Source: RMDB library 15KLIB, as collected in RNAgym. Structure probing data (2A3 and DMS) for a 170-nucleotide construct. For 2A3, 1,051 sequencing reads were counted. The reactions ran in a buffer of 150 mM KOAc, 10 mM MgCl2 and 150 mM bicine (pH 8.5), at 24 C. Values cover nucleotides 27 to 129.
RNA sequence: GGGAACGACUCGAGUAGAGUCGAAAAUAUGUUGUAAAGAAUAGUACAGCUUUUCCAUUUGAAACACUUUCAGCAUGUCGUGCGUAUUUGGAUUCACGCACGACACAGCAGUUAACAAUCGAAGUCUCACCGCCGCGGUUCGCCGCGGCGAAAAGAAACAACAACAACAAC
Reactivity to 2A3 in 0.01 (KOAc 150mM, MgCl2 10mM, bicine 150mM(pH8.5), 24C), signal-to-noise 1, nucleotides 027 to 129: u190a020u010g000u010u000g000u030a020a010a020g110a210a000u090a140g010u000a050c000a000g000c000u010u150u010u030c020c020a140u000u000u160g150a080a080a000c000a050c210u080u000u100c020a040g050c000a000u000g000u000c000g000u010g000c000g000u060a000u040u070u100g230g080a030u040u110c040a080c000g000c000a000c000g030a000c000a000c090a000g000c000a180g000u040u050a010a010c000a050a180u030c000g000a070a000g010u000c000u000c080a110c000
Reactivity to DMS in 0.01 (KOAc 150mM, MgCl2 10mM, bicine 150mM(pH8.5), 24C), signal-to-noise 1, nucleotides 027 to 129: u000a110u010g000u000u000g010u040a000a110a040g010a230a000u180a150g050u000a060c050a010g030c010u000u000u000u000c000c000a010u060u000u000g010a280a040a140c300a050c040u000u000u000c000a060g000c110a300u000g040u000c020g000u000g000c000g060u000a020u060u030u140g000g010a200u080u000c130a000c000g020c000a020c000g000a080c000a010c060a000g000c020a000g000u070u070a020a000c130a000a010u000c200g000a000a080g000u070c170u000c000a110c080